Structure probing data (2A3 and DMS) for a 177-nucleotide construct. 2A3 is a SHAPE reagent: it acylates the 2'-hydroxyl of flexible nucleotides of all four kinds. For DMS, 4,200 sequencing reads were counted. Values cover nucleotides 27 to 126. DMS adducts were read by reverse transcription with MarathonRT. The data come from the RNA Mapping Database (RMDB), library OK2TST.
RNA sequence: GGGAACGACUCGAGUAGAGUCGAAAAAGAAUAACGCGGGGCAACCGCUAGCCGGCUCCGUUCUACCCAAUGGGAGGUUAGCUGUUGAUUAAGACAGCAUCAUGAUCCCCCUUUGUACUUGAAAUCAGUAAUUAAAUCGAUUCGUCGAUUUAAUUACAAAAGAAACAACAACAACAAC
Reactivity to 2A3 in 0.01 (KOAc 150mM, MgCl2 10mM, bicine 150mM(pH8.5), 24C), signal-to-noise 4, nucleotides 027 to 126: a000g040a040a060u150a080a020c060g000c020g000g020g030g010c050a070a060c090c030g000c030u020a030g050c060c020g050g000c000u000c000c000g030u040u000c000u100a150c010c000c000a000a040u070g010g000g010a080g010g040u040u070a030g020c040u000g010u020u030g050a300u150u200a090a060g020a010c000a010g030c000a020u090c030a030u230g040a030u010c020c010c000c010c000u040u090u100g090u080a100c050u040u080g090a040a040a080u130c020a030
Reactivity to DMS in 0.01 (KOAc 150mM, MgCl2 10mM, bicine 150mM(pH8.5), 24C), signal-to-noise 4, nucleotides 027 to 126: a120g000a160a100u010a130a120c210g000c020g010g000g010g010c060a110a100c140c040g010c040u000a060g030c100c070g020g010c020u000c010c000g000u000u000c050u010a180c030c030c030a090a050u000g010g000g000a040g010g010u000u000a070g010c010u000g000u000u000g010a160u020u010a150a190g000a020c000a010g010c010a080u010c170a150u010g000a050u000c010c010c000c010c020u000u000u010g010u000a060c130u000u000g000a050a120a080u020c150a130